[RMDB]
RNA sequence: GGGAACGACUCGAGUAGAGUCGAAAAGAUAUGGAAUACUCAUCUAAAGGGUCAUGGACAUGCUUGAGUGAUCGGAAACGAUCACAUGGAGCAACAGCCAUACCCUUUAGAUGAGUAUUCCUAAGUCGCAUAUAUUUCUGUUCGCAGAAAUAUAUGCAAAAGAAACAACAACAACAAC
Reactivity to DMS in 0.01 (KOAc 150mM, MgCl2 10mM, bicine 150mM(pH8.5), 24C), signal-to-noise 4, nucleotides 027 to 126: g010a120u000a300u000g000g010a040a010u000a000c000u000c000a010u000c000u010a010a010a010g000g000g020u010c300a010u000g000g000a060c100a220u000g030c000u000u000g000a110g030u000g010a010u000c000g010g010a110a090a190c000g010a010u000c000a010c000a020u020g000g000a010g010c000a030a060c300a190g000c000c000a010u000a010c000c000c000u000u000u000a010g010a000u000g000a010g010u000a000u000u000c000c000u010a010a090g020u010c130
Chemical mapping of a 177-nucleotide RNA with DMS.
The RNA was probed in 150 mM KOAc, 10 mM MgCl2 and 150 mM bicine (pH 8.5) at 24 C.
The data come from the RNA Mapping Database (RMDB), library TTRINS.